[RMDB]
Conditions: 150 mM KOAc, 10 mM MgCl2 and 150 mM bicine (pH 8.5), 24 C. An RNA of 177 nucleotides, treated with 2A3 and DMS and read out base by base. Source: RMDB library OK1LIB, as collected in RNAgym. For 2A3 the reverse transcriptase was SuperScript II with manganese. For DMS the reverse transcriptase was MarathonRT. The 2A3 profile rests on 4,532 reads.
RNA sequence: GGGAACGACUCGAGUAGAGUCGAAAACAUUAACAGCACUCGUCGGUUCGUAUGCAGCCGACAAACCUGCAUAACCAUAUUGAUUUGCUGCUUGUACAGGGGUUACGUCACUGUUAGUAGCUUGUGCCGAUGUAAAUCCGUUCGCGGAUUUACAUCGAAAAGAAACAACAACAACAAC
Reactivity to 2A3 in 0.01 (KOAc 150mM, MgCl2 10mM, bicine 150mM(pH8.5), 24C), signal-to-noise 6, nucleotides 027 to 126: c030a070u140u170a090a050c010a070g030c020a030c060u070c060g040u020c030g060g000u070u050c020g000u060a070u220g080c060a010g020c000c000g000a010c010a000a000a010c000c000u020g020c020a040u080a120a070c030c030a080u100a190u180u200g160a170u100u080u180g010c010u020g000c000u070u160g060u060a010c010a010g060g050g030g020u110u150a050c100g070u080c080a020c090u000g010u040u000a020g000u000a000g000c000u030u070g030u050g040c000
Reactivity to DMS in 0.01 (KOAc 150mM, MgCl2 10mM, bicine 150mM(pH8.5), 24C), signal-to-noise 2, nucleotides 027 to 126: c090a080u050u030a050a080c120a070g040c300a070c050u000c120g010u000c000g000g000u000u000c080g020u000a090u010g010c080a020g000c000c010g000a050c140a000a030a070c190c040u000g000c070a070u000a020a050c110c120a070u010a100u030u030g000a090u000u020u020g030c090u010g000c160u000u030g000u000a030c070a070g000g000g010g000u040u000a090c130g000u010c080a040c000u020g000u000u000a040g010u000a110g000c060u000u000g000u010g040c010